Structure probing data (DMS and 2A3) for a 177-nucleotide construct.
2A3 adducts were read by reverse transcription with SuperScript II with manganese.
Reactivities are given for positions 27 through 126.
The reactions ran in a buffer of 150 mM KOAc, 10 mM MgCl2 and 150 mM bicine (pH 8.5), at 24 C.
Source: RMDB libraries RFM100 and RFMREP, as collected in RNAgym.
DMS adducts were read by reverse transcription with MarathonRT.
As a SHAPE reagent, 2A3 marks flexible, mostly unpaired nucleotides at the ribose 2'-OH.
[RMDB]
RNA sequence: GGGAACGACUCGAGUAGAGUCGAAAAUCGCCGUCGGGGUAGAAACGAAGCCCCGACGAGUAGGCAGGCGUGGAGGUUUGUGACGAAGCCUUGGGAGUGAUCCCGGGUCGAACAGCCUCUAGUGCAGCAAUAUCCGUUAUUUCGAUAACGGAUAUUGAAAAGAAACAACAACAACAAC
Reactivity to DMS in 0.01 (KOAc 150mM, MgCl2 10mM, bicine 150mM(pH8.5), 24C), signal-to-noise 9, nucleotides 027 to 126: u030c030g020c050c000g010u000c000g000g000g010g020u000a050g010a090a140a140c300g000a190a270g000c000c000c000c000g010a000c000g000a040g000u010a050g010g010c090a080g010g010c020g010u010g010g000a010g000g010u000u020u030g020u010g010a190c120g000a120a140g010c010c000u000u030g050g000g000a020g010u060g000a170u000c000c000c000g000g000g010u000c020g000a230a020c010a030g000c000c000u000c000u000a030g010u020g010c020a130g010
Reactivity to 2A3 in 0.01 (KOAc 150mM, MgCl2 10mM, bicine 150mM(pH8.5), 24C), signal-to-noise 8, nucleotides 027 to 126: u060c010g000c010c000g000u000c010g000g000g010g020u080a070g200a190a230a040c150g040a140a040g020c000c000c000c000g000a000c000g000a010g000u050a030g020g080c100a040g110g010c040g030u070g000g010a010g040g010u150u300u170g020u060g040a150c030g020a070a030g080c010c000u090u230g010g000g000a020g030u110g020a030u020c010c000c000g000g000g010u040c000g000a000a000c000a000g000c010c000u010c000u010a030g030u040g000c030a030g010